[RMDB]
The record gives the reactivity of an RNA of 177 nucleotides to 2A3 and DMS. Reactivities are given for positions 27 through 126. Source: RMDB library TTRDES, as collected in RNAgym. Reactivities are rounded to 0.1 and cut off at 0 and 3. DMS adducts were read by reverse transcription with MarathonRT. Conditions: 150 mM KOAc, 10 mM MgCl2 and 150 mM bicine (pH 8.5), 24 C.
RNA sequence: GGGAACGACUCGAGUAGAGUCGAAAAGAUAUGGAUCCUAUGAGGGAGCUGAUACUCGGAAACGAGUACAGCGUUGAUCUCACGGAUCCUAAGUCAAAUCAAACUUCUGCUUCGGCAGAAGUUUGAAGCUUUAUUCAGACUUCGGUCUGAAUAAAGCAAAAGAAACAACAACAACAAC
Reactivity to 2A3 in 0.01 (KOAc 150mM, MgCl2 10mM, bicine 150mM(pH8.5), 24C), signal-to-noise 1, nucleotides 027 to 126: g030a010u060a020u130g020g000a000u050c010c060u130a190u300g000a010g050g220g060a080g000c010u080g050a300u030a010c010u000c000g030g010a040a020a010c020g000a000g000u000a000c010a000g000c010g030u100u080g040a120u000c000u000c000a020c000g020g010a010u000c010c000u020a010a000g000u000c000a070a010a220u040c000a000a010a030c020u030u000c000u030g000c000u040u120c300g150g000c000a020g040a010a000g010u000u010u000g000a030a000
Reactivity to DMS in 0.01 (KOAc 150mM, MgCl2 10mM, bicine 150mM(pH8.5), 24C), signal-to-noise 2, nucleotides 027 to 126: g000a040u000a220u010g000g000a000u000c000c000u010a280u000g020a030g050g020g020a090g000c000u000g010a230u000a000c020u000c000g000g010a040a070a140c010g030a010g000u000a000c000a000g000c000g030u030u020g000a080u000c000u010c010a110c300g000g000a000u000c000c000u000a030a070g030u000c040a130a160a210u000c000a000a010a000c000u000u000c000u000g010c000u000u000c190g010g030c000a020g000a000a000g010u000u000u000g010a010a120